RNA sequence: GGGAACGACUCGAGUAGAGUCGAAAAUAGGCGGAUGCCUUGGCUUCUAGAGACGAUGAAGGACGUGAUAAGCUGCGAUAAGUUACGGUAAGCUGCUAUAUGCUUUGACCCGUAAAUUUCCGAAUGGCGUAGACAAAUGGUUCGCCAUUUGUCUACGAAAAGAAACAACAACAACAAC
Reactivity to DMS in 0.01 (KOAc 150mM, MgCl2 10mM, bicine 150mM(pH8.5), 24C), signal-to-noise 5, nucleotides 027 to 126: u010a050g010g020c030g020g010a090u010g010c020c010u000u010g020g010c100u000u000c040u000a110g010a130g020a080c080g000a080u010g000a150a130g000g010a060c040g020u020g000a070u000a070a200g010c030u000g010c060g010a040u010a020a060g000u000u000a010c020g000g000u000a020a050g010c020u000g000c050u030a120u000a070u010g010c010u000u000u010g000a080c300c010c010g000u000a010a030a080u000u000u000c020c020g000a120a090u010g010g000
Reactivity to 2A3 in 0.01 (KOAc 150mM, MgCl2 10mM, bicine 150mM(pH8.5), 24C), signal-to-noise 3, nucleotides 027 to 126: u110a020g040g010c070g130g150a070u210g000c000c000u000u060g060g000c010u040u010c000u110a060g000a020g010a140c050g050a060u060g050a060a040g060g020a010c000g020u020g020a020u020a110a020g000c000u010g000c020g030a040u010a100a050g020u010u010a010c010g010g000u000a010a030g000c000u020g000c000u080a070u030a000u300g020c000u180u100u080g030a040c000c000c010g010u020a020a030a020u000u050u010c000c000g060a060a040u090g110g020